[RMDB]
RNA sequence: GGGAACGACUCGAGUAGAGUCGAAAACUCGCGAGCGGUGUGAGUGUCGAGAGGAAGGUGGAUAGGUAGUGGUAGUUGGACGUUUUUGGUCGUGAGAGUGCGUAUGUGUAUGUAGAGGAAGAUGUAGUACUACCAGUUGAUUCGUCAACUGGUAGUAAAAAGAAACAACAACAACAAC
Reactivity to 2A3 in 0.01 (KOAc 150mM, MgCl2 10mM, bicine 150mM(pH8.5), 24C), signal-to-noise 8, nucleotides 027 to 126: c010u010c010g040c020g030a050g010c040g030g060u070g010u030g060a120g020u070g050u080c060g050a020g000a030g120g030a070a030g040g020u050g020g020a080u050a100g020g060u030a030g030u050g060g010u030a050g050u030u090g040g020a040c050g020u000u010u030u070u130g040g000u040c030g030u020g050a060g000a010g040u050g010c020g030u060a080u120g070u010g030u020a060u110g030u030a030g020a040g110g020a070a030g020a060u100g030u080a050g060
Reactivity to DMS in 0.01 (KOAc 150mM, MgCl2 10mM, bicine 150mM(pH8.5), 24C), signal-to-noise 8, nucleotides 027 to 126: c030u000c030g010c100g010a080g020c060g010g010u010g020u010g010a080g010u010g010u000c050g000a060g000a080g000g020a070a080g020g010u010g010g010a050u020a060g010g010u010a050g010u010g000g010u010a050g010u000u010g000g010a070c110g000u000u000u010u010u020g000g010u010c050g010u010g010a080g010a080g010u010g000c070g010u010a050u020g010u000g010u020a050u010g010u010a050g000a080g000g010a060a060g000a070u020g020u010a090g010

This 177-nucleotide RNA was probed chemically with 2A3 and DMS.
Values are in units of 0.01, from 0 to 300, in steps of 10.
In probing experiments dimethyl sulfate is read out at A N1 and C N3, which are open when not base-paired.
Conditions: 150 mM KOAc, 10 mM MgCl2 and 150 mM bicine (pH 8.5), 24 C.
For DMS, 38,787 sequencing reads were counted.